[RMDB]
RNA sequence: GGGAACGACUCGAGUAGAGUCGAAAAGAAAGGCGCGCCUGACAUCUAAAUGGAGUUGCCGCGAGGCCCGCCUGUUGGCACUCUUCCGUCGAGAUCCUGGGAGACGAUCGCGGUCAGUCCACAGAAAGGGUUAACAAAACUUCGGUUUUGUUAACCCAAAAGAAACAACAACAACAAC
Reactivity to DMS in 0.01 (KOAc 150mM, MgCl2 10mM, bicine 150mM(pH8.5), 24C), signal-to-noise 1, nucleotides 027 to 126: g000a110a040a000g010g000c020g010c300g000c030c020u000g000a070c030a080u000c100u000a060a200a050u000g020g020a130g100u000u010g010c140c030g000c070g040a020g010g040c020c100c020g020c020c000u020g000u030u000g080g020c010a140c100u000c030u000u060c090c010g030u140c030g010a040g000a020u020c020c000u000g010g020g010a120g000a120c150g000a090u040c020g070c000g030g000u020c120a130g010u000c000c010a070c040a040g000a140a020a030
Reactivity to 2A3 in 0.01 (KOAc 150mM, MgCl2 10mM, bicine 150mM(pH8.5), 24C), signal-to-noise 1, nucleotides 027 to 126: g080a020a050a110g000g000c020g020c000g000c000c000u060g090a080c100a100u280c120u220a200a110a020u060g000g010a030g120u070u050g030c010c000g000c000g000a020g030g020c000c100c020g090c000c000u010g040u050u100g080g000c040a000c030u040c000u060u030c030c070g050u030c000g040a010g000a070u050c040c020u030g010g000g010a030g000a030c020g040a020u000c020g030c000g000g000u000c010a020g100u000c000c000a000c000a070g180a000a160a070

The data come from the RNA Mapping Database (RMDB), library OK1LIB. Chemical mapping of a 177-nucleotide RNA with DMS and 2A3. Values cover nucleotides 27 to 126.